[RMDB]
RNA sequence: GGGAACGACUCGAGUAGAGUCGAAAACGUGAACACCGUGUACCGUCUGAUGCAUUGCAUGCUGUUGGCGAUAGCGUUGAAAAUGCAUUCAACUUUACUAGAGCUAAGAGACAACCUGGAUGCGAAGCCCACCGUAUCAGUUCGCUGAUACGGUGGGAAAAGAAACAACAACAACAAC
Reactivity to 2A3 in 0.01 (KOAc 150mM, MgCl2 10mM, bicine 150mM(pH8.5), 24C), signal-to-noise 8, nucleotides 027 to 126: c040g060u070g070a080a020c070a010c090c030g030u040g020u080a050c020c030g040u040c070u090g070a070u080g020c010a030u030u110g030c020a010u060g000c000u030g040u100u040g070g000c030g010a040u030a010g040c010g000u000u020g040a060a080a020a060u150g060c080a020u030u080c010a020a030c000u080u170u190a070c030u040a010g010a010g080c020u050a080a000g040a010g030a120c020a030a030c020c010u040g060g030a040u040g030c040g040a060a020g030
Reactivity to DMS in 0.01 (KOAc 150mM, MgCl2 10mM, bicine 150mM(pH8.5), 24C), signal-to-noise 4, nucleotides 027 to 126: c040g020u010g010a120a080c100a110c110c030g010u000g000u020a090c040c060g010u010c050u020g020a080u010g000c040a040u000u020g040c120a070u020g000c010u000g010u010u000g000g010c020g010a170u000a010g010c160g010u000u010g030a040a020a080a110u050g000c190a090u010u000c070a010a030c060u000u020u050a130c020u000a040g000a210g000c040u000a080a060g010a070g010a060c070a020a070c150c020u000g000g020a040u000g010c000g040a100a100g000
This 177-nucleotide RNA was probed chemically with 2A3 and DMS. For 2A3, 7,714 sequencing reads were counted. DMS adducts were read by reverse transcription with MarathonRT.